[RMDB]
RNA sequence: GGGAACGACUCGAGUAGAGUCGAAAAAGCGUCGUCGAACCUUCCAACCUUCCAAAGCAGCAAAAGCUGAACCUUCCAACCUUCCAAUCUACUCGAGAGGAGGAGGAGGAGGAGGAGGAGGAAUUAAUCUAGGCUAUUAGUUCGCUAAUAGCCUAGAAAAAGAAACAACAACAACAAC
Reactivity to 2A3 in 0.01 (KOAc 150mM, MgCl2 10mM, bicine 150mM(pH8.5), 24C), signal-to-noise 1, nucleotides 027 to 126: a000g110c080g030u030c000g030u030c040g060a110a040c010c030u040u000c040c000a100a100c000c020u030u000c000c020a100a120a060g020c050a000g000c010a120a180a270a080g000c010u010g020a050a050c000c030u060u000c020c000a050a050c030c010u110u030c000c020a040a050u040c000u060a060c040u070c070g020a030g010a020g050g030a020g010g040a060g010g050a040g020g050a050g030g040a050g040g040a030g040g010a030g030g010a030a040u050u060a070a040
Reactivity to DMS in 0.01 (KOAc 150mM, MgCl2 10mM, bicine 150mM(pH8.5), 24C), signal-to-noise 2, nucleotides 027 to 126: a050g020c060g020u000c060g040u000c090g010a100a080c060c020u000u030c050c030a070a050c050c030u010u000c040c050a050a080a090g030c030a020g030c070a060a070a020a190g030c000u000g000a060a130c050c010u000u000c000c010a070a050c040c030u000u000c020c000a110a190u000c010u010a040c090u000c020g000a070g000a160g010g000a160g000g010a080g000g020a150g020g000a150g010g000a100g000g000a130g000g000a170g000g000a300a080u000u000a000a090